[RMDB]
RNA sequence: GGGAACGACUCGAGUAGAGUCGAAAACAUAUCUUCAAUUGAAUUUAAUUUACCUAAUCCUGAUAAUUGACCCGCUUCAAAUAAGUUUGGUGUCACUACCGUUGCUUUAGGUAGUAAAUAUUUAAUCCAAUCGGCAGUGAUUCGUCACUGCCGAUUGAAAAGAAACAACAACAACAAC
Reactivity to DMS in 0.01 (KOAc 150mM, MgCl2 10mM, bicine 150mM(pH8.5), 24C), signal-to-noise 1, nucleotides 027 to 126: c050a250u030a060u010c060u050u050c130a190a030u000u000g010a030a010u000u010u010a060a020u020u020u000a000c000c000u000a030a000u000c190c020u010g000a030u000a070a110u010u000g020a010c010c010c000g000c020u000u000c290a110a080a130u090a050a050g020u040u080u020g000g000u000g000u000c050a020c030u000a060c060c050g000u010u040g000c180u010u000u030a000g000g010u000a020g000u020a050a000a070u010a010u000u000u000a000a090u000c300
Reactivity to 2A3 in 0.01 (KOAc 150mM, MgCl2 10mM, bicine 150mM(pH8.5), 24C), signal-to-noise 4, nucleotides 027 to 126: c000a000u170a070u090c050u250u090c150a130a280u090u170g070a100a050u090u090u060a030a090u120u020u050a100c000c000u000a000a030u070c030c020u040g080a140u070a210a070u130u020g050a050c010c000c010g010c000u040u000c060a190a220a240u230a090a110g030u020u260u300g030g010u190g000u010c000a000c020u040a050c010c000g140u100u070g030c100u020u030u020a020g000g000u000a000g000u080a020a090a000u070a010u000u100u130a080a030u000c020
An RNA of 177 nucleotides, treated with DMS and 2A3 and read out base by base.
For DMS, 1,294 sequencing reads were counted.